[RMDB]
RNA sequence: GGGAACGACUCGAGUAGAGUCGAAAAUCAGAGUUCCAGCUCCAGGUGACUGUGCAGGUGACUUAGCUUCUCUCAGCCUCAGUUUUCCUAUCUGUCCAGAGGGGAGAAUUGUCCCUCCUCCAAGGCAGGGCUGUGAGCAUCGGGAUGACUGCAGCCACAUGGGAAUUCGGUUCGCCGAAUUCCCAUGAAAAGAAACAACAACAACAAC
Reactivity to 2A3 in 0.01 (KOAc 150mM, MgCl2 10mM, bicine 150mM(pH8.5), 24C), signal-to-noise 1, nucleotides 027 to 156: u150c010a010g010a010g040u040u000c000c030a020g000c000u000c000c030a040g000g010u040g090a060c000u040g020u050g080c000a010g060g060u030g030a020c000u070u210a030g050c080u170u060c030u020c050u020c060a010g030c030c000u020c010a030g000u000u000u140u010c000c000u060a210u090c000u030g040u030c000c000a030g050a150g040g010g040g020a010g060a110a060u110u280g190u170c000c000c000u000c000c000u000c000c010a040a050g010g030c000a000g040g000g020c010u090g030u060g060a020g020c020a060u110c040g110g020g000a000u040g030a100c010u030g030c010a020g040c020c050a040